[RMDB]
RNA sequence: GGGAACGACUCGAGUAGAGUCGAAAAACUCGACCUAGAAUGAGGUCGAGAGUCGUGCAAAUAAGAGGCUCGACAGAUGCACGACAAAGCGAGCCUACAGGCGUCGAGGAAAACUCGACGCCUGAAACGUCUUCGUCGAGUUCGCUCGAUGAAGACGAAAAGAAACAACAACAACAAC
Reactivity to 2A3 in 0.01 (KOAc 150mM, MgCl2 10mM, bicine 150mM(pH8.5), 24C), signal-to-noise 4, nucleotides 027 to 126: a000c010u010c000g010a010c000c000u030a090g260a300a230u260g060a080g040g000u000c000g000a000g000a000g000u000c010g000u000g000c020a020a070a130u150a300a090g060a040g080g000c010u010c000g030a040c040a060g090a050u090g010c000a000c020g010a030c050a060a020a000g080c020g000a000g000c010c000u030a020c010a000g000g000c000g000u000c000g000a010g000g070a080a070a120a070c000u000c000g000a000c000g000c000c000u000g000a000a000a000
Reactivity to DMS in 0.01 (KOAc 150mM, MgCl2 10mM, bicine 150mM(pH8.5), 24C), signal-to-noise 2, nucleotides 027 to 126: a060c000u000c020g000a020c000c000u010a180g000a120a160u030g010a040g000g000u000c000g030a010g000a040g050u000c000g000u000g000c000a020a090a110u020a070a070g000a040g000g000c050u010c010g000a150c110a100g020a250u010g000c000a000c000g000a070c020a070a070a060g010c050g000a010g010c000c010u000a220c000a000g000g000c030g010u000c030g000a020g000g040a050a080a090a040c040u010c030g010a030c010g000c000c010u000g000a010a010a100